[RMDB]
RNA sequence: GGGAACGACUCGAGUAGAGUCGAAAAGCUCAAAUCUAAAUAUAGAUGCAAACAACAUCGUAAAAUUCGAGCGUCAAGCAGUAUUUGCUUAAGCCCAACUGAGGCUUGCUCGCUUUUAGUCCGACUCCGUUAACGGCUAAAACGAAACCCCAACGGAUCAAUGACCCUGGUUCGCCAGGGUCAUUGAAAAAGAAACAACAACAACAAC
Reactivity to 2A3 in 0.01 (KOAc 150mM, MgCl2 10mM, bicine 150mM(pH8.5), 24C), signal-to-noise 2, nucleotides 027 to 156: g030c020u010c080a050a150a190u080c040u200a120a140a100u270a090u040a100g010a020u020g040c060a190a100a010c050a070a030c000a020u040c000g100u120a110a110a000a050u110u040c040g000a000g020c030g150u200c080a010a010g060c000a020g100u300a230u170u200u030g000c000u000u020a000a000g010c030c000c000a040a080c140u090g020a080g070g000c000u030u030g000c000u000c020g030c000u000u020u000u000a010g000u050c030c000g010a010c020u000c000c000g010u000u020a010a000c000g000g000c000u000a040a000a020a020c020g100a140a080a090c000c040c010c000a010a020c040g000g000a040